[RMDB]
RNA sequence: GGGAACGACUCGAGUAGAGUCGAAAAGGACUGGACCAGGACCACAGGUACCGCCGGACCCAUAUAAGGUACCAACCAGAAUAAGACAGAUACACAAUGGGCAGCACAAUGUAGCCAGUCAGAAGCGCGUGCCUAGUCUACGGCACGAGAGAGCUAAAUGGUAAAAUCAUUUCGAUGAUUUUACCAUAAAAGAAACAACAACAACAAC
Reactivity to 2A3 in 0.01 (KOAc 150mM, MgCl2 10mM, bicine 150mM(pH8.5), 24C), signal-to-noise 3, nucleotides 027 to 156: g070g010a020c060u050g000g010a040c060c050a040g020g080a020c020c010a030c070a120g010g000u060a080c000c030g000c020c020g060g040a130c010c000c000a020u100a000u030a100a060g020g000u030a040c030c000a020a040c030c030a030g060a150a070u160a120a010g080a100c040a040g050a050u130a130c080a010c060a080a100u080g010g030g000c010a020g000c010a000c010a060a090u080g050u110a070g020c010c010a000g020u040c020a010g080a080a000g020c040g000c000g020u000g000c000c000u010a040g030u000c030u070a070c120g000g000c000a000c000g000a000g000a000g000a010g010c030u040a270a150
Reactivity to DMS in 0.01 (KOAc 150mM, MgCl2 10mM, bicine 150mM(pH8.5), 24C), signal-to-noise 3, nucleotides 027 to 156: g010g040a130c010u000g010g000a140c070c050a100g000g010a190c020c020a090c060a090g000g010u000a010c010c020g020c040c050g010g050a120c010c020c000a180u000a000u000a080a060g010g040u000a010c000c020a090a090c070c030a160g030a090a120u010a090a100g010a110c040a100g040a110u000a060c080a110c040a060a100u000g030g020g020c030a100g020c060a060c040a050a090u010g020u000a110g030c020c030a080g010u000c050a100g000a080a040g030c010g000c000g020u000g010c020c000u000a150g010u010c070u000a090c190g000g010c010a000c020g000a010g020a170g010a080g010c020u010a050a130
An RNA of 207 nucleotides, treated with 2A3 and DMS and read out base by base. Reactivities are given for positions 27 through 156. The DMS profile rests on 4,855 reads.